Structure probing data (DMS) for a 177-nucleotide construct.
RNA sequence: GGGAACGACUCGAGUAGAGUCGAAAAGAUAUGGAGGACGAGGCCUAGUAGUCACAGAAAUAUUUCUGGCUAUCGGAAACGAUAGCAGAUCUGUGACUACUAGGCUACCCACCGUCCUCCUAAGUCACUGAAUGGAAUUGUUCGCAAUUCCAUUCAGAAAAGAAACAACAACAACAAC
Reactivity to DMS in 0.01 (KOAc 150mM, MgCl2 10mM, bicine 150mM(pH8.5), 24C), signal-to-noise 2, nucleotides 027 to 126: g020a060u000a300u020g030g030a030g000g020a020c000g010a130g040g000c000c000u000a000g040u000a000g000u010c000a000c000a000g000a040a120a110u030a210u000u000u000c030u000g020g000c000u000a000u000c000g000g020a160a100a220c000g010a010u000a000g000c010a040g000a040u000c000u000g020u000g000a010c000u000a020c000u000a000g000g000c000u000a000c000c020c060a300c080c010g000u000c000c010u000c000c000u000a000a100g020u000c060a210